[RMDB]
RNA sequence: GGGAACGACUCGAGUAGAGUCGAAAACAUCUCUUCCAUCAAAAAUGGCAUGGUGCAGGAGACCCUCUGGAUGCCGGACGUCAAACAAAACCAGAGCGACCUGUUCAAAACCGCAGCUAACGAGUGGAUCCCUCUCUCUAUUCGUAGAGAGAGGGAUAAAAGAAACAACAACAACAAC
Reactivity to DMS in 0.01 (KOAc 150mM, MgCl2 10mM, bicine 150mM(pH8.5), 24C), signal-to-noise 2, nucleotides 027 to 126: c190a160u010c020u010c000u010u020c070c010a010u010c070a020a050a100a220a050u000g030g000c040a070u000g040g000u000g000c160a030g010g010a140g030a120c120c120c000u000c010u000g000g010a080u000g010c070c040g000g010a070c080g030u010c110a120a080a100c080a080a080a060a070c030c010a050g030a040g010c170g010a090c050c030u000g000u000u010c130a100a050a090a100c040c020g030c090a070g000c060u000a040a070c100g000a060g020u000g000g000
Reactivity to 2A3 in 0.01 (KOAc 150mM, MgCl2 10mM, bicine 150mM(pH8.5), 24C), signal-to-noise 2, nucleotides 027 to 126: c040a110u040c030u000c000u160u000c040c030a100u060c030a050a110a090a040a080u090g020g020c020a030u080g000g000u020g080c000a020g000g060a090g070a100c020c020c010u000c000u010g110g000a110u050g080c070c000g070g060a080c090g030u100c060a100a150a140c030a040a170a100a040c020c010a000g020a010g050c000g020a060c000c000u060g000u050u100c050a060a100a030a040c000c020g000c020a030g000c020u030a020a040c020g030a030g110u060g070g000
An RNA of 177 nucleotides, treated with DMS and 2A3 and read out base by base. Source: RMDB library OK2TRN, as collected in RNAgym. For 2A3 the reverse transcriptase was SuperScript II with manganese. For DMS, 1,113 sequencing reads were counted. The 2A3 profile rests on 1,684 reads.